This 177-nucleotide RNA was probed chemically with DMS.
It was measured as part of the RMDB library OK2TRN.
The reactions ran in a buffer of 150 mM KOAc, 10 mM MgCl2 and 150 mM bicine (pH 8.5), at 24 C.
For DMS, 542 sequencing reads were counted.

RNA sequence: GGGAACGACUCGAGUAGAGUCGAAAAAUUAUGAGUGCAAUAGAAAGGGUGUGAUUCCAAAGAUUUAAACUCUUGCAGUACAUCCUAUUAGCGACCAGACAAAUGGAUUGGAUCUCACCACUCAUGGUGGGAGUGAAGUUUUCGAACUUCACUCCCAAAAAGAAACAACAACAACAAC
Reactivity to DMS in 0.01 (KOAc 150mM, MgCl2 10mM, bicine 150mM(pH8.5), 24C), signal-to-noise 1, nucleotides 027 to 126: a040u000u000a000u000g000a070g030u000g010c090a100a070u000a150g010a020a170a070g010g000g000u000g000u000g030a120u000u020c200c060a200a000a070g000a020u000u000u000a090a110a140c290u000c000u000u010g030c190a090g000u000a010c010a010u000c000c010u010a110u000u060a100g010c150g030a030c040c110a030g000a070c080a070a140a120u010g000g000a240u000u000g030g000a170u020c010u020c060a120c210c080a010c060u000c030a060u000g010g000